[RMDB]
RNA sequence: GGGAACGACUCGAGUAGAGUCGAAAAUGGGGUGUGUGUGCCGGGGCUGAGCAUCAAACAGAUUGCAUCAACGGCGCAAGUGGAGGCCGUCAUGUGCUCUGCGUCCGCGCAGCAGCAUGCGAACACGUCGUAUCCAAGUUUUCGAACUUGGAUACGAAAAAGAAACAACAACAACAAC
Reactivity to DMS in 0.01 (KOAc 150mM, MgCl2 10mM, bicine 150mM(pH8.5), 24C), signal-to-noise 5, nucleotides 027 to 126: u000g010g020g010g030u010g030u010g020u000g040u000g010c030c020g020g010g020g030c090u000g000a300g010c040a040u010c080a090a130a130c180a120g010a050u000u010g000c020a120u000c060a060a070c020g010g000c030g020c070a060a110g000u010g000g000a090g020g000c050c040g000u000c080a040u000g020u000g000c040u000c010u000g000c010g010u010c170c230g000c050g010c020a030g000c170a060g000c010a020u000g010c080g010a070a080c110a070c150g000
Reactivity to 2A3 in 0.01 (KOAc 150mM, MgCl2 10mM, bicine 150mM(pH8.5), 24C), signal-to-noise 3, nucleotides 027 to 126: u160g010g010g020g000u030g010u030g010u010g010u040g030c030c020g020g000g020g000c070u040g020a010g020c010a020u060c050a070a170a080c050a050g090a090u060u170g030c010a110u070c040a100a010c010g030g000c020g020c070a060a030g060u100g050g080a040g040g000c020c030g020u050c040a060u100g010u040g010c050u000c010u020g010c000g040u000c070c130g000c010g000c030a000g000c000a010g000c010a000u040g040c040g030a070a020c040a010c060g090

Conditions: 150 mM KOAc, 10 mM MgCl2 and 150 mM bicine (pH 8.5), 24 C. Chemical mapping of a 177-nucleotide RNA with DMS and 2A3. The data come from the RNA Mapping Database (RMDB), library OK2TRN. 2A3 adducts were read by reverse transcription with SuperScript II with manganese. Values cover nucleotides 27 to 126.